[RMDB]
RNA sequence: GGGAACGACUCGAGUAGAGUCGAAAACAUACGAGCUCAUCCACGCCAGGUGGGCUAUGCUGGCCGCUGCCGGCAUCAUCAUCCCCGAGGGCCUCCAGGCCAACGGCGCAGCGAUCAAGGGCGGGACUGGUACUCUCAACUUCGGUUGAGAGUACCAAAAAGAAACAACAACAACAAC
Reactivity to DMS in 0.01 (KOAc 150mM, MgCl2 10mM, bicine 150mM(pH8.5), 24C), signal-to-noise 2, nucleotides 027 to 126: c060a120u000a050c180g000a070g000c000u010c000a010u000c020c040a120c150g000c080c080a190g000g020u010g000g000g010c010u000a010u020g000c000u030g000g000c050c300g020c150u010g010c020c010g030g010c020a000u030c080a070u010c100a100u010c030c060c020c050g050a040g000g010g030c020c020u020c120c190a160g030g000c010c010a030a050c070g020g000c090g030c070a060g010c030g000a060u000c240a190a080g030g040g040c070g010g010g020a030c140